[RMDB]
RNA sequence: GGGAACGACUCGAGUAGAGUCGAAAAGAGGCGAAAUAAUUCCCAUCUCCUAUGUACGGCCGGAGAUGGGUCUGGCCGUACUAAUAAGCCUCAUAGUGACGAGAGUCACGAAUUCUGGAUAGCCUGUGGUAGUCGGCUAUCCUUUGACUACCGUAGACCUACGUGCAUAUUUCGAUAUGCACGUAGGAAAAGAAACAACAACAACAAC
Reactivity to 2A3 in 0.01 (KOAc 150mM, MgCl2 10mM, bicine 150mM(pH8.5), 24C), signal-to-noise 2, nucleotides 027 to 156: g010a010g010g020c010g060a140a000a070u090a030a090u050u000c020c020c000a030u030c060u020c030c030u090a100u110g010u000a000c010g000g010c020c000g030g000a030g060a130u300g100g030g080u000c000u000g000g000c000c020g020u000a010c000u000a030a030u090a000a020g000c010c000u000c000a100u080a040g010u010g010a000c000g010a020g030a000g100u000c000a000c000g000a000a010u120u060c090u060g010g000a010u000a010g000c030c000u100g020u090g070g040u130a040g090u070c020g000g020c020u000a010u010c000c010u000u090u100g000a000c000u020a080c060c010g060u060a020g040a130
Reactivity to DMS in 0.01 (KOAc 150mM, MgCl2 10mM, bicine 150mM(pH8.5), 24C), signal-to-noise 1, nucleotides 027 to 156: g010a040g020g070c020g000a110a090a160u010a090a160u010u000c030c040c010a000u000c000u020c030c070u000a120u010g010u000a060c010g020g000c010c040g040g000a060g010a110u000g010g030g010u000c000u010g000g060c050c040g000u000a060c020u000a010a100u020a160a220g000c010c030u010c020a150u000a170g030u020g030a010c030g010a300g010a300g020u010c020a030c020g030a110a100u010u000c070u000g010g000a150u000a080g020c020c010u000g030u030g040g000u000a060g010u000c220g000g000c000u000a080u010c070c050u010u020u010g000a050c010u000a030c010c000g010u000a120g000a130